[RMDB]
RNA sequence: GGGAACGACUCGAGUAGAGUCGAAAAACCUGAUGAUUCGUCAUCAGGUCACAUGCCGCCCGAACCGCUUCCUGACCGGGCGGAUUCACUUUAAAUGGAGCACUGCUGCAUCAUUCGUGAUGCAGAAUGAUAAGGCAUCAUUCGUGAUGCCUUAUCAAAAAGAAACAACAACAACAAC
Reactivity to 2A3 in 0.01 (KOAc 150mM, MgCl2 10mM, bicine 150mM(pH8.5), 24C), signal-to-noise 5, nucleotides 027 to 126: a010c000c000u000g000a010u000g000a000u010u080c180g050u000c130a000u000c000a000g000g000u010c010a070c000a050u160g020c000c010g000c000c010c000g000a030a020c050c070g020c060u220u080c020c000u010g020a040c030c000g020g000g000c040g000g010a010u040u030c030a040c050u130u160u250a080a160a100u210g010g000a010g030c020a020c120u150g000c020u000g000c000a010u000c010a020u020u100c180g090u030g010a000u000g000c000a000g010a000a050
Reactivity to DMS in 0.01 (KOAc 150mM, MgCl2 10mM, bicine 150mM(pH8.5), 24C), signal-to-noise 5, nucleotides 027 to 126: a030c000c000u000g010a000u000g010a010u000u010c180g010u000c000a000u000c000a010g000g000u000c060a050c150a090u000g000c010c000g000c010c000c010g000a050a150c070c130g000c020u000u010c010c010u000g010a150c160c020g000g000g000c010g000g010a010u010u010c100a090c210u010u010u010a050a060a100u000g000g020a030g010c030a170c290u010g000c010u000g010c000a000u000c000a040u010u010c170g020u010g000a010u000g000c000a010g000a030a060